[RMDB]
RNA sequence: GGGAACGACUCGAGUAGAGUCGAAAAUUACACACUUGAUAUUGCUGGAUAUAUCCGGUUAUAGAAAUUACACCCAAAACGGAAGAUGCUCAUGAAUUCGCGUUUGUUUAUAUCCUUAAAGUAGCUGAAUUAGCAGUCACUUCGGUGACUGCUAAUUAAAAGAAACAACAACAACAAC
Reactivity to DMS in 0.01 (KOAc 150mM, MgCl2 10mM, bicine 150mM(pH8.5), 24C), signal-to-noise 2, nucleotides 027 to 126: u020u010a080c110a100c100a040c110u000u000g010a080u010a030u000u000g000c050u020g000g010a050u000a100u040a120u040c040c000g050g000u000u000a010u050a000g010a130a060a060u000u020a150c230a080c010c020c020a020a080a070a090c060g000g000a030a020g000a070u050g000c010u000c030a020u030g010a100a050u020u000c030g010c050g020u010u000u010g000u030u000u010a010u000a090u000c000c000u020u000a060a080a120g010u030a080g010c020u030g000
Reactivity to 2A3 in 0.01 (KOAc 150mM, MgCl2 10mM, bicine 150mM(pH8.5), 24C), signal-to-noise 1, nucleotides 027 to 126: u110u020a000c070a000c000a020c110u000u020g000a000u100a000u040u150g050c060u000g010g050a020u070a000u000a050u150c000c000g030g000u010u080a020u000a090g190a000a030a000u130u070a070c020a130c000c000c000a040a270a000a000c000g000g010a040a040g070a060u080g020c040u000c070a020u210g060a070a040u000u130c030g000c010g000u000u000u000g000u020u070u000a050u040a010u090c000c000u190u100a070a300a000g090u040a000g090c000u000g090